[RMDB]
RNA sequence: GGGAACGACUCGAGUAGAGUCGAAAAGUAGACUUCAGUACUAUACUAAGAAAUUAUUUUGAAAUGCUAAAGAUUGCCCUUUUAUUAAUUAGAAUGCAUCAUACUUUGAUAUCUUUGUAGUUUACUGGUUGAAAAGAAGCCAUUUCUGAAGAGAGGGCUAUGGUGCGUAGUUCGCUACGCACCAUAGAAAAGAAACAACAACAACAAC
Reactivity to DMS in 0.01 (KOAc 150mM, MgCl2 10mM, bicine 150mM(pH8.5), 24C), signal-to-noise 1, nucleotides 027 to 156: g000u000a080g040a080c010u000u000c010a080g020u030a060c020u010a130u000a140c090u020a080a080g000a110a190a080u020u000a090u000u000u000u010g010a060a160a060u020g020c020u000a060a020a130g040a130u020u010g000c040c060c020u000u000u000u000a070u020u010a100a130u050u000a040g000a140a090u000g010c080a040u000c030a130u000a100c100u000u000u020g000a090u000a070u000c020u000u000u000g010u000a060g000u000u000u010a040c080u010g010g000u040u010g010a080a070a100a140g000a070a090g040c010c030a140u000u000u000c020u000g000a050a070g020a090g000a050g020g040g030
Reactivity to 2A3 in 0.01 (KOAc 150mM, MgCl2 10mM, bicine 150mM(pH8.5), 24C), signal-to-noise 1, nucleotides 027 to 156: g010u030a010g000a010c000u030u000c090a000g020u010a010c010u040a000u060a090c060u050a010a010g000a100a070a070u230u100a100u030u130u070u110g100a140a110a000u070g000c010u100a060a060a110g080a200u000u150g000c000c000c000u040u100u000u090a110u050u080a200a000u030u040a010g100a050a040u110g000c000a000u010c010a040u170a120c060u130u040u090g010a010u130a030u090c030u000u010u020g000u000a110g040u030u180u060a000c020u000g000g020u010u030g060a000a010a050a100g020a080a000g010c040c000a030u000u110u100c010u060g060a090a060g010a010g030a030g000g000g000
This 207-nucleotide RNA was probed chemically with DMS and 2A3. DMS adducts were read by reverse transcription with MarathonRT. The reactions ran in a buffer of 150 mM KOAc, 10 mM MgCl2 and 150 mM bicine (pH 8.5), at 24 C. The 2A3 profile rests on 404 reads. It was measured as part of the RMDB library OK3TST.